[RMDB]
RNA sequence: GGGAACGACUCGAGUAGAGUCGAAAAUAGACAACCAGGACCUUAAUGGCAAGUGGUAUGAUUUUGGUGACUUCGUAAUCACUCAACCUGGUUCAGGAGUAGCUAUAGUUGAUAGCUACUAUUCUUACUACAUAACGUCCUUCGGGACGUUAUGUAGAAAAGAAACAACAACAACAAC
Reactivity to 2A3 in 0.01 (KOAc 150mM, MgCl2 10mM, bicine 150mM(pH8.5), 24C), signal-to-noise 2, nucleotides 027 to 126: u110a010g080a020c050a020a000c000c000a000g020g060a070c010c020u080u190a170a060u220g060g010c040a120a040g010u040g030g000u030a050u040g030a040u000u140u080u110g170g010u170g060a010c020u000u000c010g020u030a090a050u080c000a000c040u070c000a020a070c010c000u040g020g000u040u070c000a020g020g120a010g010u000a000g060c000u000a000u050a080g170u100u140g210a010u000a000g040c000u000a000c000u000a000u020u000c000u000u000a000
Reactivity to DMS in 0.01 (KOAc 150mM, MgCl2 10mM, bicine 150mM(pH8.5), 24C), signal-to-noise 2, nucleotides 027 to 126: u010a120g000a120c140a020a080c000c040a030g000g010a260c020c020u000u000a080a090u000g010g000c300a080a040g010u000g010g010u000a030u000g010a020u000u020u000u000g000g040u000g000a070c070u000u010c070g010u000a050a070u000c020a030c040u000c090a050a230c020c010u000g010g000u000u000c100a100g010g000a020g000u000a000g000c000u000a010u000a130g030u030u010g000a210u000a000g000c000u000a010c000u000a050u020u000c020u010u000a170